[RMDB]
RNA sequence: GGGAACGACUCGAGUAGAGUCGAAAAGUCGUCUCUUCGGAGACGACAAAACACGUUCAUCCCUAUUGGGACGGAAGUAGGCAUAGUGCCGAAGGAACGCAUUAAAACCUGCCCGUUCGCGGGCAGGGGAAUUCUCUUUCUUCGGAAAGAGAAUUCCAAAAGAAACAACAACAACAAC
Reactivity to DMS in 0.01 (KOAc 150mM, MgCl2 10mM, bicine 150mM(pH8.5), 24C), signal-to-noise 2, nucleotides 027 to 126: g020u000c000g000u010c000u000c000u000u000c150g010g000a050g030a000c000g000a000c010a030a000a180a070c190a070c010g000u000u030c010a300u000c000c010c000u000a160u020u000g000g000g010a000c110g000g020a040a210g000u000a160g010g010c000a110u000a140g000u020g030c000c000g000a290a100g000g020a000a000c000g050c070a100u020u000a030a030a060a300c000c000u000g010c000c010c000g040u000u000c260g010c010g000g000g000c010a000g030g010
Reactivity to 2A3 in 0.01 (KOAc 150mM, MgCl2 10mM, bicine 150mM(pH8.5), 24C), signal-to-noise 2, nucleotides 027 to 126: g000u010c000g010u000c000u000c000u020u040c230g150g000a010g030a000c000g000a000c020a000a010a010a000c020a000c020g010u010u030c010a020u020c020c010c010u130a300u080u300g010g000g020a020c010g000g020a030a000g010u030a030g000g010c030a140u140a230g120u180g140c010c000g010a000a000g010g030a000a010c000g000c020a020u070u180a040a080a030a090c000c010u000g030c020c010c000g010u020u040c160g010c020g100g000g000c010a000g000g000